An RNA of 177 nucleotides, treated with DMS and 2A3 and read out base by base. The RNA was probed in 150 mM KOAc, 10 mM MgCl2 and 150 mM bicine (pH 8.5) at 24 C. 2A3 adducts were read by reverse transcription with SuperScript II with manganese. For DMS, 1,178 sequencing reads were counted. It was measured as part of the RMDB library TTRDES. For 2A3, 1,331 sequencing reads were counted.

[RMDB]
RNA sequence: GGGAACGACUCGAGUAGAGUCGAAAAGAUAUGGAAAUCGAAAGGCAACAGCUACGCGGUCGGAAACGACCGGUAGACAUGCCUUUCUUUGGAUUUCCUAAGUCAAACGCUUGCUUCGGCAAGCGAACGAACUUGAUCAGUUCGCUGAUCAAGUUCGAAAAGAAACAACAACAACAAC
Reactivity to DMS in 0.01 (KOAc 150mM, MgCl2 10mM, bicine 150mM(pH8.5), 24C), signal-to-noise 1, nucleotides 027 to 126: g000a030u000a230u010g000g000a020a000a000u000c000g000a010a000a020g010g050c000a090a110c210a190g000c000u000a000c000g010c000g000g010u010c000g000g000a050a020a110c010g000a010c000c000g020g000u000a000g010a010c020a300u000g010c000c010u000u000u000c000u010u020u000g000g000a020u000u000u000c000c010u010a020a240g010u010c040a050a120a260c030g000c020u000u000g000c010u020u020c220g000g000c020a020a020g010c010g020a010a080
Reactivity to 2A3 in 0.01 (KOAc 150mM, MgCl2 10mM, bicine 150mM(pH8.5), 24C), signal-to-noise 1, nucleotides 027 to 126: g000a010u030a010u100g000g010a000a000a010u010c010g030a000a020a000g040g030c090a300a040c050a300g060c040u050a010c050g070c010g300g000u030c030g000g000a000a000a030c050g000a000c000c000g040g010u010a010g000a000c030a100u300g000c010c000u090u040u000c000u130u130u100g060g000a000u020u010u000c000c000u000a060a000g080u030c080a260a000a000c020g010c010u020u030g000c000u040u060c170g110g000c030a000a000g010c010g000a050a010